[RMDB]
The record gives the reactivity of an RNA of 177 nucleotides to DMS and 2A3. Conditions: 150 mM KOAc, 10 mM MgCl2 and 150 mM bicine (pH 8.5), 24 C. DMS (dimethyl sulfate) methylates the pairing face of unpaired adenines and cytosines. Reactivities are given for positions 27 through 126.

RNA sequence: GGGAACGACUCGAGUAGAGUCGAAAAUUGUCGCAGUGAAUGAUGGGUAUUGGAGUACCCCAGUAUCUUUGUCUACUUAUCAGCCAAUCUCUAAUUUUGUAUCUAACGACGCUCUUAGACAGUCCUACACCCUAAUUAUAUUCGUAUAAUUAGGGUGAAAAGAAACAACAACAACAAC
Reactivity to DMS in 0.01 (KOAc 150mM, MgCl2 10mM, bicine 150mM(pH8.5), 24C), signal-to-noise 7, nucleotides 027 to 126: u020u020g010u020c020g000c080a050g010u010g000a080a060u020g010a060u020g000g000g020u010a030u020u010g010g000a120g000u010a070c100c040c000c050a050g010u010a050u010c030u010u010u010g020u010c040u010a050c080u010u020a040u010c040a070g000c050c020a030a070u010c020u010c010u020a060a090u010u010u020u010g010u030a070u010c040u010a060a070c080g020a050c060g000c020u020c030u010u010a050g010a060c150a090g000u000c010c020u010a170
Reactivity to 2A3 in 0.01 (KOAc 150mM, MgCl2 10mM, bicine 150mM(pH8.5), 24C), signal-to-noise 9, nucleotides 027 to 126: u080u050g040u030c020g010c060a020g050u040g130a150a080u100g080a080u090g020g000g010u050a040u030u090g070g020a100g100u140a110c020c010c000c000a010g030u030a030u030c000u050u120u120g050u010c010u020a070c030u130u120a060u130c030a020g040c020c010a060a080u030c030u000c020u080a080a210u060u110u100u130g090u060a110u040c040u050a060a030c040g030a020c020g010c010u010c000u020u010a040g010a070c020a020g040u010c000c000u010a020